[RMDB]
RNA sequence: GGGAACGACUCGAGUAGAGUCGAAAAUUGCCGAUCAGGCUGUGUUGUGGCGGGGGCGAAACAGGAUCGACAAGGGUGUAAAGAUCGCUCUUUUACUCGGCAUGAUACCACCGUUAUCGGGUCAACAAAAAGAAUAUGUGGUUCGCCACAUAUUCAACUAAGACCUAGUGUUCGCACUAGGUCUUAGAAAAGAAACAACAACAACAAC
Reactivity to 2A3 in 0.01 (KOAc 150mM, MgCl2 10mM, bicine 150mM(pH8.5), 24C), signal-to-noise 1, nucleotides 027 to 156: u070u030g030c020c000g030a110u120c110a080g020g000c050u030g030u010g010u060u150g060u030g040g060c040g000g000g010g000g010c030g060a030a020a000c070a020g020g030a090u070c060g030a050c020a100a080g020g140g010u040g030u100a190a090a090g070a090u080c010g000c050u010c030u000u080u000u070a050c020u000c000g020g000c010a000u000g000a010u030a020c020c010a000c010c010g090u120u030a020u070c040g000g000g000u010c030a010a000c040a000a070a000a010a000g010a000a000u000a000u010g050u020g000g050u050u080c220g040c070c020a000c000a000u000a000u000u000c000a000a000
Reactivity to DMS in 0.01 (KOAc 150mM, MgCl2 10mM, bicine 150mM(pH8.5), 24C), signal-to-noise 2, nucleotides 027 to 156: u000u000g020c020c010g020a070u000c080a100g040g030c040u010g050u000g000u000u000g010u000g000g040c060g000g010g020g020g030c070g020a040a080a120c040a060g000g020a060u000c020g030a100c090a050a070g000g010g010u010g000u000a040a110a140g010a090u000c030g000c050u000c050u010u000u000u000a100c040u010c010g000g000c010a090u000g010a100u010a090c060c010a040c010c020g000u010u000a090u040c050g000g010g070u000c060a060a140c160a040a060a090a140a150g000a040a010u000a010u000g040u000g010g020u000u010c300g020c040c000a020c010a000u000a000u000u000c000a020a090
Structure probing data (2A3 and DMS) for a 207-nucleotide construct. For 2A3 the reverse transcriptase was SuperScript II with manganese.